[RMDB]
RNA sequence: GGGAACGACUCGAGUAGAGUCGAAAACACAGGAGGUAUGGGCGUCCGUUUGUACCUCUCGGCCCUCGGCAAGGAUCUCCCUCCUAAAAUUCGACGUACAAACGAUUUUGAUUUCACGUUCGCCGUGCCACGUAAACUCGCGUCUGAGAAGCUCGUACACAGUGAUAGUCUUCGGACUAUCACUGUGAAAAGAAACAACAACAACAAC
Reactivity to 2A3 in 0.01 (KOAc 150mM, MgCl2 10mM, bicine 150mM(pH8.5), 24C), signal-to-noise 1, nucleotides 027 to 156: c220a000c010a030g050g030a070g000g000u190a030u080g030g040g030c000g030u030c030c060g000u000u040u040g020u010a030c020c000u000c060u000c050g070g000c010c010c010u050c070g070g000c080a090a120g050g000a050u030c000u040c140c050c000u050c040c000u210a150a190a070a050u170u030c020g000a000c250g030u070a000c000a020a020a060c130g010a030u080u010u060u260g110a110u000u130u190c110a050c150g030u050u050c030g000c010c000g020u030g000c000c000a020c030g040u040a150a160a000c050u010c040g000c030g070u030c040u010g020a020g040a090a000g000c010u010c090g000u070a060